About this RNA: Structure probing data (2A3) for a 207-nucleotide construct. The reactions ran in a buffer of 150 mM KOAc, 10 mM MgCl2 and 150 mM bicine (pH 8.5), at 24 C. The data come from the RNA Mapping Database (RMDB), library RNAMAK. 2A3 adducts were read by reverse transcription with SuperScript II with manganese.
RNA sequence: GGGAACGACUCGAGUAGAGUCGAAAAGAGUAUUUUCGAAUACUCGACCAGGGGUCUAAGAGAGGACAAGACAUGACCUGAAGCCUCCACGGGUCAACAGCUUGUCUACCCACCUACUUAGACGGAGGCACCCAACGCGCCAGGCUUCGGCCUGGAACGGUACCUUUACAUUCGUGUAAAGGUACCGAAAAGAAACAACAACAACAAC
Reactivity to 2A3 in 0.01 (KOAc 150mM, MgCl2 10mM, bicine 150mM(pH8.5), 24C), signal-to-noise 2, nucleotides 027 to 156: g000a010g010u040a040u040u040u050u210c160g050a030a000u000a000c000u000c000g000a010c000c030a050g250g040g010g000u000c010u100a130a030g170a010g040a090g060g030a070c090a110a040g020a030c050a100u040g010a000c030c020u020g040a130a000g020c000c010u000c030c010a040c020g010g000g000u030c000a070a030c060a120g160c130u030u140g000u030c010u080a100c040c030c010a010c020c010u090a110c010u060u060a020g000a060c020g010g020a020g000g010c000a040c010c020c020a100a070c080g070c060g000c090c010a000g000g000c010u080u190c200g090g000c020c000u010g010g000a000a020